RNA sequence: GGGAACGACUCGAGUAGAGUCGAAAAGAUAUGGAAGUCGUUGUAGGGAGCUCCAGUACGUCGGAAACGACGUACGGAGCGACGAUCUACACCGACUUCCUAAGUCAAACGCUGGUUCGCCAGCGAAGAUAAUACUUGACUUCGGUCAAGUAUUAUCAAAAGAAACAACAACAACAAC
Reactivity to DMS in 0.01 (KOAc 150mM, MgCl2 10mM, bicine 150mM(pH8.5), 24C), signal-to-noise 7, nucleotides 027 to 126: g000a040u000a300u000g000g020a040a010g010u000c000g020u000u000g000u000a000g000g000g000a020g010c000u000c000c000a090g040u000a010c000g030u000c000g010g000a130a080a300c010g020a010c000g010u000a000c010g000g010a010g010c000g000a020c240g000a020u010c000u000a010c000a000c040c000g000a010c000u000u000c000c000u000a010a070g010u010c020a150a120a250c020g010c000u010g000g000u000u020c280g020c010c000a020g010c010g000a040a060
Reactivity to 2A3 in 0.01 (KOAc 150mM, MgCl2 10mM, bicine 150mM(pH8.5), 24C), signal-to-noise 3, nucleotides 027 to 126: g020a020u080a030u160g000g000a000a000g010u010c000g000u010u000g000u000a010g000g000g010a010g000c000u010c000c050a060g020u000a010c010g000u000c000g040g050a080a090a100c010g000a000c000g000u010a010c010g000g010a000g000c000g010a020c000g010a010u000c010u000a000c000a000c000c000g010a000c000u000u010c000c000u010a000a010g010u000c020a060a050a100c020g000c000u010g000g120u090u090c300g070c100c000a000g000c010g010a050a010
The record gives the reactivity of an RNA of 177 nucleotides to DMS and 2A3. The data come from the RNA Mapping Database (RMDB), library TTRDES. For 2A3, 30,404 sequencing reads were counted. DMS (dimethyl sulfate) methylates the pairing face of unpaired adenines and cytosines. 2A3 adducts were read by reverse transcription with SuperScript II with manganese.